[RMDB]
RNA sequence: GGGAACGACUCGAGUAGAGUCGAAAAGCGGGGGAUAAGCUUCGUAGUCGAGAGGGAAACAGCCCAGAUCGCCGGCUAAGGCCCCUAAGCGUGUACUAAGUGGAAAAGGAUGUGGGGUCGCGAAGACGGCUCCACUGGGAUUCGUCCCAGUGGAGCCAAAAGAAACAACAACAACAAC
Reactivity to DMS in 0.01 (KOAc 150mM, MgCl2 10mM, bicine 150mM(pH8.5), 24C), signal-to-noise 2, nucleotides 027 to 126: g010c070g000g040g020g000g000a020u030a140a050g020c030u000u010c090g080u000a190g050u020c010g020a070g000a300g000g000g000a000a100a120c300a090g000c000c000c010a170g010a140u000c030g020c030c060g000g080c000u050a100a130g010g000c010c030c000c000u000a050a090g000c040g030u010g000u040a210c050u030a030a150g000u030g030g000a080a040a120a110g000g010a030u000g050u000g000g000g000g000u040c030g000c010g000a090a010g020a080c270
Reactivity to 2A3 in 0.01 (KOAc 150mM, MgCl2 10mM, bicine 150mM(pH8.5), 24C), signal-to-noise 1, nucleotides 027 to 126: g060c050g000g000g010g010g000a060u010a240a000g060c000u000u090c130g000u020a050g000u000c000g010a000g000a000g000g000g000a140a300a040c090a040g110c000c000c000a020g050a090u020c040g000c000c030g030g060c020u120a000a070g180g150c000c080c040c000u150a090a000g000c000g000u000g000u010a110c080u100a150a150g100u070g090g000a140a000a000a000g010g010a110u180g000u000g020g000g000g000u030c000g000c000g000a040a000g050a050c090

Conditions: 150 mM KOAc, 10 mM MgCl2 and 150 mM bicine (pH 8.5), 24 C. An RNA of 177 nucleotides, treated with DMS and 2A3 and read out base by base. Values are in units of 0.01, from 0 to 300, in steps of 10. For 2A3 the reverse transcriptase was SuperScript II with manganese. The 2A3 profile rests on 405 reads.